[RMDB]
RNA sequence: GGGAACGACUCGAGUAGAGUCGAAAAAAUUAGAGGCAAUUUGAAAUAAUUUAAAUUAGCUCAACCCUACUGCACUUACCGAACUAGAUAACGGUGUAGUAGGGGUAAAUUCUCCGCAUUCGGUGGGCAACCACCUGAGGUUUCGACCUCAGGUGAAGAACAUAAUAUUGUUCGCAAUAUUAUGUUCAAAAGAAACAACAACAACAAC
Reactivity to 2A3 in 0.01 (KOAc 150mM, MgCl2 10mM, bicine 150mM(pH8.5), 24C), signal-to-noise 2, nucleotides 027 to 156: a000a010u180u110a050g010a060g060g020c020a020a010u040u020u060g050a130a090a100u240a130a160u110u090u140a030a050a010u050u040a040g000c000u010c010a010a010c000c000c000u000a000c010u000g000c000a010c010u020u090a010c030c030g080a110a040c050u080a080g070a170u130a290a060c090g000g000u000g000u000a000g000u010a010g000g000g000g000u000a000a000a000u020u000c060u010c010c010g080c060a040u030u040c010g010g000u030g030g030g030c060a090a090c020c000a000c000c000u000g000a000g000g020u020u070u170c150g040a030c000c000u010c000a000g000g010u000g000a000a010
Reactivity to DMS in 0.01 (KOAc 150mM, MgCl2 10mM, bicine 150mM(pH8.5), 24C), signal-to-noise 2, nucleotides 027 to 156: a030a110u010u000a070g010a150g030g000c010a030a020u000u000u010g000a050a050a220u010a130a190u010u000u010a010a010a040u010u000a120g040c020u010c000a040a040c000c000c000u000a050c000u000g000c030a010c000u000u010a100c050c020g030a070a140c150u000a130g000a110u000a080a100c110g000g020u010g030u000a020g020u000a010g000g010g000g010u010a000a030a090u000u000c020u000c010c060g000c070a210u000u000c070g010g030u000g010g000g010c050a090a120c060c020a010c010c000u020g000a020g040g020u010u000u000c300g010a050c040c010u000c000a010g000g000u000g010a020a070